RNA sequence: GGGAACGACUCGAGUAGAGUCGAAAAGAUGAGGCCUGUGAGCUUCCUAUCCAGCAGUGGUGAAGGCCUUGCCCUGGGUGGCAAGAUACUUGCUCUAUGGUCACAGCUCAGCCACGGGAAGCUGUGCGACCUCAGGUGAGCAAUUCACUGUCCAGUAUAAAUCAUCACUGUUCGCAGUGAUGAUUUAAAAAGAAACAACAACAACAAC
Reactivity to DMS in 0.01 (KOAc 150mM, MgCl2 10mM, bicine 150mM(pH8.5), 24C), signal-to-noise 2, nucleotides 027 to 156: g000a130u000g000a050g030g010c010c030u030g060u010g010a100g020c030u010u010c010c050u000a170u010c090c040a190g040c060a100g030u020g030g020u040g010a110a140g030g030c030c010u000u000g010c020c000c010u010g000g030g010u000g010g050c010a020a030g000a110u000a030c030u000u000g030c000u000c040u000a080u010g030g000u000c040a050c050a070g000c020u010c030a290g030c020c020a100c060g020g010g030a110a070g000c000u010g020u000g010c050g000a010c010c020u000c140a080g000g010u000g000a070g010c050a060a080u010u000c040a040c010u000g040u000c030c080a120g010u000a220
Reactivity to 2A3 in 0.01 (KOAc 150mM, MgCl2 10mM, bicine 150mM(pH8.5), 24C), signal-to-noise 4, nucleotides 027 to 156: g060a080u110g010a000g000g020c040c140u220g080u060g090a020g010c010u020u000c000c000u090a160u110c070c040a050g060c030a020g090u030g040g000u060g060a080a030g030g010c010c000u000u010g030c040c000c010u150g050g050g000u210g040g000c000a000a010g020a040u160a110c060u040u020g020c000u000c000u030a080u150g030g000u030c010a020c040a010g000c010u020c120a030g020c020c010a080c030g010g010g000a020a010g000c010u030g030u050g070c040g020a070c010c000u020c030a010g010g100u030g020a020g040c110a110a150u120u040c010a030c010u040g080u060c030c010a020g020u050a060